[RMDB]
RNA sequence: GGGAACGACUCGAGUAGAGUCGAAAACGGUGGCCCCGGACGAGAGAUACAUGACGACGUGUCGAAUUAUCCAAGUUGCAGCGGCUGCCCCGGACGAGAGAUACAUGACGACGUGUCGAAUUAUCCACGCCAGUGGACGGUUCGCCGUCCACUGGCGAAAAGAAACAACAACAACAAC
Reactivity to 2A3 in 0.01 (KOAc 150mM, MgCl2 10mM, bicine 150mM(pH8.5), 24C), signal-to-noise 1, nucleotides 027 to 126: c060g000g040u070g000g040c000c030c020c010g090g000a000c030g050a020g000a000g030a050u050a060c110a100u100g020a040c120g020a000c090g120u090g020u070c030g000a000a080u130u030a000u020c000c000a050a000g070u140u000g070c080a120g000c060g000g000c000u150g080c000c000c000c000g020g020a000c000g010a060g000a000g000a000u030a030c110a050u150g130a190c120g000a000c000g000u050g080u080c000g020a060a040u060u060a030u050c000c000a090